[RMDB]
RNA sequence: GGGAACGACUCGAGUAGAGUCGAAAAUUACACUGAGAGCAUUUAGCCUGAUUUCUCUUUAAAUCAAAUCAGGCAAUAGAGAGAAACUCGAGAGGUGAAAACCCCACAGCAUUCUGAAAUGUAUUUGAAGGCAACGCUACCUUCGGGUAGCGUUGAACUCUUACUUUAGGUUCGCCUAAAGUAAGAGAAAAGAAACAACAACAACAAC
Reactivity to 2A3 in 0.01 (KOAc 150mM, MgCl2 10mM, bicine 150mM(pH8.5), 24C), signal-to-noise 2, nucleotides 027 to 156: u050u020a030c050a020c030u080g020a010g000a000g150c060a050u040u050u180a020g030c020c000u020g010a020u030u090u000c130u040c000u100u300u180a170a190a080u150c040a020a010a000u000c000a010g000g000c000a010a000u010a000g050a010g010a000g010a080a070a010c010u010c020g060a080g010a070g070g010u010g010a050a000a000a040c020c000c020c010a040c000a010g020c000a040u150u020c070u190g080a190a120a080u070g030u050a150u080u190u110g040a070a000g090g000c000a000a000c000g000c000u000a000c010c000u010u030c100g000g010g000u000a000g040c000g010u000u000g000a000a000
Reactivity to DMS in 0.01 (KOAc 150mM, MgCl2 10mM, bicine 150mM(pH8.5), 24C), signal-to-noise 1, nucleotides 027 to 156: u000u000a120c050a030c020u000g000a150g000a110g020c030a040u000u010u010a280g020c000c000u000g000a030u010u000u000c050u000c120u000u020u040a050a180a060u000c000a060a050a030u000c000a040g000g030c010a050a040u020a070g030a110g000a180g030a180a130a030c030u000c020g030a050g020a150g000g000u030g000a100a120a110a070c000c000c000c050a110c050a030g000c030a060u000u000c080u000g030a050a030a060u000g010u030a070u000u000u000g000a060a000g010g010c000a020a000c050g000c020u000a030c000c020u010u000c280g070g000g000u000a000g050c030g030u010u010g010a040a050